[RMDB]
RNA sequence: GGGAACGACUCGAGUAGAGUCGAAAAGGUCAUGGGUGAUGAAGGGUACGACAGGUAGCUGAAGUAGCAGCACAGCACGUUCAUCACAAAGCUCGUCAGCUCCCACUGCGUCGUGGACAAGUUAUCCCCUAUGGCCUAGUUUCGACUAGGCCAUAGGAAAAGAAACAACAACAACAAC
Reactivity to DMS in 0.01 (KOAc 150mM, MgCl2 10mM, bicine 150mM(pH8.5), 24C), signal-to-noise 4, nucleotides 027 to 126: g010g000u010c100a020u000g010g020g050u000g000a020u000g010a080a080g000g020g020u000a050c040g000a090c090a090g020g000u030a030g010c010u020g010a090a100g010u020a070g030c020a090g000c120a150c150a130g030c100a130c090g020u030u020c060a040u040c080a060c100a050a130a080g000c010u010c020g000u010c050a010g010c020u000c040c020c030a160c140u000g000c050g000u010c010g010u010g000g000a090c100a100a120g010u010u010a070u000c010c030
Reactivity to 2A3 in 0.01 (KOAc 150mM, MgCl2 10mM, bicine 150mM(pH8.5), 24C), signal-to-noise 5, nucleotides 027 to 126: g060g000u070c040a030u100g050g000g030u070g000a070u040g020a030a050g100g050g070u120a010c030g020a030c070a010g030g060u060a050g000c000u010g010a080a020g040u200a030g090c030a010g000c010a030c010a090g060c040a030c110g060u060u050c060a100u030c010a040c050a060a050a010g000c000u020c060g070u040c020a000g010c010u070c000c020c000a060c060u120g040c090g020u020c010g030u060g000g030a030c020a020a070g010u030u050a090u080c000c000

Record summary
An RNA of 177 nucleotides, treated with DMS and 2A3 and read out base by base. The 2A3 profile rests on 4,388 reads. Reactivities are given for positions 27 through 126. DMS adducts were read by reverse transcription with MarathonRT. The data come from the RNA Mapping Database (RMDB), library OK1LIB. In probing experiments dimethyl sulfate is read out at A N1 and C N3, which are open when not base-paired.